[RMDB]
An RNA of 177 nucleotides, treated with 2A3 and DMS and read out base by base. 2A3 is a SHAPE reagent: it acylates the 2'-hydroxyl of flexible nucleotides of all four kinds. Values cover nucleotides 27 to 126. 2A3 adducts were read by reverse transcription with SuperScript II with manganese. The 2A3 profile rests on 2,529 reads. DMS adducts were read by reverse transcription with MarathonRT.

RNA sequence: GGGAACGACUCGAGUAGAGUCGAAAAAGACAUACGUUCGCGUAUGUCUGACGGGCACCUGACCCUAAGCAAAUGCUCUAUGACAGGACACACUGAUUGUGAUACCUCGAGAUUUCGAUCUCGAGAACGAUGAUGCGAAUUUCGAUUCGCAUCAUCGAAAAGAAACAACAACAACAAC
Reactivity to 2A3 in 0.01 (KOAc 150mM, MgCl2 10mM, bicine 150mM(pH8.5), 24C), signal-to-noise 3, nucleotides 027 to 126: a000g000a000c000a010u010a000c000g030u020u050c210g000c000g090u020a000u000g000u020c010u000g010a020c010g000g000g060c020a030c060c050u080g190a270c010c010c000u070a060a010g010c020a070a080a190u170g000c010u000c030u110a100u130g120a040c040a020g020g060a050c010a010c020a010c060u090g100a180u220u100g030u030g040a040u090a130c010c000u010c020g020a010g010a010u040u050u170c210g020a010u000c010u010c000g000a010g000a010a000
Reactivity to DMS in 0.01 (KOAc 150mM, MgCl2 10mM, bicine 150mM(pH8.5), 24C), signal-to-noise 4, nucleotides 027 to 126: a000g010a030c000a010u000a010c000g010u000u000c260g050c010g020u010a000u000g000u000c000u000g000a110c240g000g000g000c040a100c060c010u000g010a180c040c010c010u000a080a040g010c040a100a060a080u000g000c020u010c070u000a040u010g020a100c060a030g010g000a190c070a050c050a070c140u010g010a110u010u000g000u000g010a170u000a080c210c000u000c000g000a020g000a010u000u000u010c170g000a020u000c010u000c000g010a010g000a060a070